[RMDB]
RNA sequence: GGGAACGACUCGAGUAGAGUCGAAAAAGUUCGCGCUUCCGUGAAACGCGAAAAUCGGACGGUGGCUGCAAGUCGCAUCGCAAAACCGCGGCAAGUGGGGUUAGCGAGAGGAGGCUGGGUUUUGGCUAGAACACACGGUACUUCGGUACCGUGUGAAUCAUUGAGAUGGGUUCGCCCAUCUCAAUGAAAAAGAAACAACAACAACAAC
Reactivity to 2A3 in 0.01 (KOAc 150mM, MgCl2 10mM, bicine 150mM(pH8.5), 24C), signal-to-noise 2, nucleotides 027 to 156: a000g060u010u000c010g000c000g010c060u080u050c020c030g110u090g090a100a020a000c000g000c020g020a050a020a000a040u120c040g050g000a010c000g020g000u050g010g030c050u040g000c040a020a070g020u000c040g030c100a060u020c050g020c030a060a080a020a020c010c040g050c030g090g030c050a060a060g060u050g020g040g000g000u010u040a010g050c040g030a030g010a000g070g040a010g010g010c040u040g000g070g000u000u060u070u090g040g000c000u050a030g040a130a010c000a000c000a000c000g010g000u000a000c000u000u110c200g030g000u000a000c000c000g000u000g000u000g000a000a000
Reactivity to DMS in 0.01 (KOAc 150mM, MgCl2 10mM, bicine 150mM(pH8.5), 24C), signal-to-noise 2, nucleotides 027 to 156: a070g010u010u000c010g030c050g010c000u000u000c040c130g030u010g030a050a040a000c020g020c000g000a020a010a110a090u010c070g010g030a090c050g030g030u000g010g000c020u010g000c030a040a060g040u010c040g030c020a130u000c020g000c020a060a030a120a120c020c060g010c020g020g030c070a060a170g000u010g010g000g000g010u000u000a180g000c030g020a030g010a140g070g000a100g010g030c050u010g030g000g010u000u000u000u030g010g000c060u000a140g020a110a200c010a000c000a010c000g000g020u000a020c000u000u000c300g010g000u000a000c000c010g000u010g020u000g000a030a120
This 207-nucleotide RNA was probed chemically with 2A3 and DMS. For DMS, 3,191 sequencing reads were counted. The 2A3 profile rests on 1,251 reads. It was measured as part of the RMDB library M2RFPK. Conditions: 150 mM KOAc, 10 mM MgCl2 and 150 mM bicine (pH 8.5), 24 C.